[RMDB]
Structure probing data (DMS) for a 177-nucleotide construct. The RNA was probed in 150 mM KOAc, 10 mM MgCl2 and 150 mM bicine (pH 8.5) at 24 C.

RNA sequence: GGGAACGACUCGAGUAGAGUCGAAAAAAAGGCUGCUGUUGUGUGCAGGGCAGUGUGCUAGGUGCUGGGGAUAAAUACUUUCCCUGUCUCGGAGGGGCCCAUAGUCUGGCUGAGAAAGAGUGAGUGACAGCCUGAGAUAAUUCGUUAUCUCAGGCUGAAAAGAAACAACAACAACAAC
Reactivity to DMS in 0.01 (KOAc 150mM, MgCl2 10mM, bicine 150mM(pH8.5), 24C), signal-to-noise 2, nucleotides 027 to 126: a050a110a120g010g020c000u000g030c010u000g020u010u020g030u000g010u010g010c050a080g030g000g010c080a050g000u000g010u010g020c060u000a090g020g000u000g010c080u010g020g000g000g000a090u010a060a050a110u010a110c120u010u000u000c020c000c010u010g000u010c050u020c030g000g020a120g000g010g010g010c060c060c060a090u020a050g010u000c050u010g010g040c020u000g000a090g000a040a030a030g010a050g030u000g000a080g010u000g020a190